The record gives the reactivity of an RNA of 207 nucleotides to 2A3. Reactivities are given for positions 27 through 156. The RNA was probed in 150 mM KOAc, 10 mM MgCl2 and 150 mM bicine (pH 8.5) at 24 C.
RNA sequence: GGGAACGACUCGAGUAGAGUCGAAAACCAUCGACUGUCACCAGAUGCUGCAUCACCUGAUCACUGAUGGCUCAACGGUAUCCGGCGGUACAACUGAAUACUUCUAGCUGCCUUUUGAGCGGGUUGGAAAAUCGGAGGUUGUUCGCAACCUCCGAAAGCUACAGUACAGCUUCGGCUGUACUGUAGCAAAAGAAACAACAACAACAAC
Reactivity to 2A3 in 0.01 (KOAc 150mM, MgCl2 10mM, bicine 150mM(pH8.5), 24C), signal-to-noise 2, nucleotides 027 to 156: c030c000a040u110c100g060a040c040u050g040u060c030a000c030c020a020g020a040u020g060c030u050g000c040a060u020c000a030c010c000u080g030a100u020c040a040c070u060g000a030u030g040g020c040u020c030a080a060c060g020g000u020a010u000c040c030g030g000c010g000g060u110a050c050a050a000c090u160g040a160a050u100a160c040u070u020c010u000a020g040c040u010g000c030c000u160u200u120u130g040a040g000c010g000g020g050u120u050g080g040a050a030a000a080u060c000g000g000a000g010g000u000u000g000u000u090c050g030c030a000a000c000c000u000c000c000g000a000a000a000